[RMDB]
Description:
Structure probing data (2A3 and DMS) for a 177-nucleotide construct. It was measured as part of the RMDB library OK2TRN. For DMS the reverse transcriptase was MarathonRT.
RNA sequence: GGGAACGACUCGAGUAGAGUCGAAAAUUGCGUCUGACGGUACAUUUUUGCUCGGUCCAAAGACAUAUACGCCUCAAAAUCUUUAGGCAUGGCGAUUGAUGUGUGCCACGGCGCCAUUGCGUAGCACGAGUCUGCUUAAGUUCGCUUAAGCAGACUCAAAAGAAACAACAACAACAAC
Reactivity to 2A3 in 0.01 (KOAc 150mM, MgCl2 10mM, bicine 150mM(pH8.5), 24C), signal-to-noise 3, nucleotides 027 to 126: u010u030g000c000g010u000c040u120g090a120c090g010g000u040a020c010a080u030u050u040u110u150g050c020u040c050g020g090u030c020c000a050a000a040g020a010c020a000u160a010u020a040c080g060c010c010u070c030a040a100a150a160u020c070u060u080u050a040g000g000c030a050u090g020g000c040g040a030u010u110g130a150u170g020u000g020u030g000c020c020a000c020g000g000c000g020c000c020a010u010u070g010c040g140u110a030g050c060a030c160
Reactivity to DMS in 0.01 (KOAc 150mM, MgCl2 10mM, bicine 150mM(pH8.5), 24C), signal-to-noise 3, nucleotides 027 to 126: u000u000g000c070g020u000c020u000g030a110c130g030g000u000a030c020a020u000u020u010u000u000g010c000u000c200g010g020u000c000c030a020a080a010g000a030c140a130u000a090u010a110c070g000c050c060u010c090a100a130a140a150u000c040u000u000u000a050g010g000c030a080u000g010g020c010g010a110u020u020g020a060u010g020u000g020u010g010c010c020a070c060g010g000c020g000c010c080a030u000u000g000c100g000u000a060g010c170a120c220